[RMDB]
RNA sequence: GGGAACGACUCGAGUAGAGUCGAAAAGAUCUCUAACAAGCCUACGAGUCGACCAGUAGGCUUGCACACGCAUACUCUUCGAAGUAUGGUCUUCGGACCGUGUGCGAGGGUCGACUUGAGAUCGAAAGGGUGUGAGGGCCUUCGGGUUCUCACACCCAAAAGAAACAACAACAACAAC
Reactivity to 2A3 in 0.01 (KOAc 150mM, MgCl2 10mM, bicine 150mM(pH8.5), 24C), signal-to-noise 1, nucleotides 027 to 126: g010a000u020c000u000c000u020a140a050c020a110a060g060c020c010u070a060c080g000a000g020u020c020g000a030c000c010a010g170u110a010g050g000c000u010u000g000c000a000c000a000c000g040c050a000u010a080c020u050c040u220u300c120g060a010a010g030u130a040u090g060g040u010c000u010u020c090g300g010a300c300c030g000u000g000u020g000c010g050a140g120g000g000u000c000g000a000c000u000u000g000a000g000a000u030c000g040a070a030a000